[RMDB]
RNA sequence: GGGAACGACUCGAGUAGAGUCGAAAAUUCAAAUUGCGGGGAAGUACUGGGGCUCUAAUCUACCAAGUCAUUGUCUGAAAAGGCAUGAUGGCCUGAGGUAAUAACUCAGGAUAUGGUUACAACGAUUAGAGAUGUUACAAUGUAUGAUUCGCAGCCCGCCUUCGUAUAAGUUCGCUUAUACGAAGGCAAAAGAAACAACAACAACAAC
Reactivity to 2A3 in 0.01 (KOAc 150mM, MgCl2 10mM, bicine 150mM(pH8.5), 24C), signal-to-noise 3, nucleotides 027 to 156: u090u050c030a020a030a070u080u040g000c000g000g000g010g030a120a020g030u010a020c020u040g060g000g220g020c000u020c000u000a000a000u000c000u000a000c000c060a020a000g000u000c000a040u140u300g010u000c010u020g040a090a050a030a030g010g000c000a000u000g000a000u010g020g000c010c000u000g000a000g000g010u050a090a080u100a180a020c000u000c000a010g040g000a020u130a130u080g000g000u000u010a020c020a020a000c080g000a000u000u000a000g000a000g000a010u040g060u090u080a120c090a130a060u170g000u000a020u170g040a030u010u020c000g000c000a000g020c000c010c010